Notes:
This 177-nucleotide RNA was probed chemically with DMS and 2A3. The DMS profile rests on 6,967 reads. The RNA was probed in 150 mM KOAc, 10 mM MgCl2 and 150 mM bicine (pH 8.5) at 24 C. Source: RMDB library OK2TST, as collected in RNAgym.
RNA sequence: GGGAACGACUCGAGUAGAGUCGAAAAGGCGCCGACGCCGCCAUCGAGCCCGCGCGCAUCGACCUGCUCAAGCGCCAGGUGGCCGAGGCGUUCCCGCAGCUGGACCUGAGCCAGGCCGUGGCCUGGAUCGAUAAUGGCCAUUCGUGGCCAUUAUCGAAAAAGAAACAACAACAACAAC
Reactivity to DMS in 0.01 (KOAc 150mM, MgCl2 10mM, bicine 150mM(pH8.5), 24C), signal-to-noise 6, nucleotides 027 to 126: g000g020c020g020c020c030g020a210c300g010c080c030g030c130c110a110u010c070g000a150g000c020c080c080g020c160g010c070g010c050a130u000c040g010a030c040c030u000g010c010u000c030a120a120g010c150g000c020c020a210g020g020u000g010g010c000c050g010a100g000g000c010g000u000u000c000c000c000g010c070a040g000c030u000g010g000a090c050c050u010g000a150g010c010c000a020g010g010c010c080g020u010g030g010c010c000u000g000g010a090
Reactivity to 2A3 in 0.01 (KOAc 150mM, MgCl2 10mM, bicine 150mM(pH8.5), 24C), signal-to-noise 4, nucleotides 027 to 126: g090g000c000g010c030c020g030a060c070g030c060c030g060c060c020a210u250c070g020a060g020c010c010c010g000c050g000c000g000c020a060u040c030g030a040c000c020u020g000c000u040c090a140a080g040c050g020c080c020a120g130g270u250g130g000c010c010g010a010g000g010c000g000u000u010c000c000c010g020c020a020g000c020u140g010g040a070c010c010u040g020a030g040c000c010a010g020g000c020c040g200u190g090g020c000c010u000g010g000a030